This 177-nucleotide RNA was probed chemically with 2A3 and DMS. For 2A3, 2,032 sequencing reads were counted. 2A3 is a SHAPE reagent: it acylates the 2'-hydroxyl of flexible nucleotides of all four kinds. Source: RMDB library OK1LIB, as collected in RNAgym. Conditions: 150 mM KOAc, 10 mM MgCl2 and 150 mM bicine (pH 8.5), 24 C.
RNA sequence: GGGAACGACUCGAGUAGAGUCGAAAAUUGAAAACGUUACUGAGUACUAUUCCAAAUGAUUCAACAUAUCCGAAAUGGAUGUCAGUAAUGAAAAGUACUUUAAUUUCACUACUUAAUAUGACUGAAGGAUCGUACCGUAUUUCGAUACGGUACGAUCAAAAGAAACAACAACAACAAC
Reactivity to 2A3 in 0.01 (KOAc 150mM, MgCl2 10mM, bicine 150mM(pH8.5), 24C), signal-to-noise 4, nucleotides 027 to 126: u030u060g030a030a010a000a000c040g000u010u020a000c020u020g030a020g010u040a040c040u090a190u060u050c040c000a030a030a110u140g070a130u140u130c040a080a100c040a140u150a040u060c010c020g070a090a100a110u190g020g000a040u070g010u010c010a000g000u020a040a020u080g120a000a010a130a030g060u100a100c000u090u040u150a090a170u050u130u120c040a010c100u120a020c000u060u170a120a130u150a150u300g070a040c080u070g030a020a040g160
Reactivity to DMS in 0.01 (KOAc 150mM, MgCl2 10mM, bicine 150mM(pH8.5), 24C), signal-to-noise 2, nucleotides 027 to 126: u010u000g000a000a000a110a060c040g000u000u010a010c050u000g020a110g000u020a010c070u000a010u000u000c000c090a140a040a300u030g000a090u020u000c200a100a200c080a040u080a030u030c020c260g010a100a060a030u000g000g030a020u040g080u000c050a030g030u000a030a030u020g000a110a110a050a010g000u000a090c150u000u020u000a000a020u020u000u040c050a100c030u020a000c150u000u020a070a110u010a010u020g000a090c120u000g000a100a170g000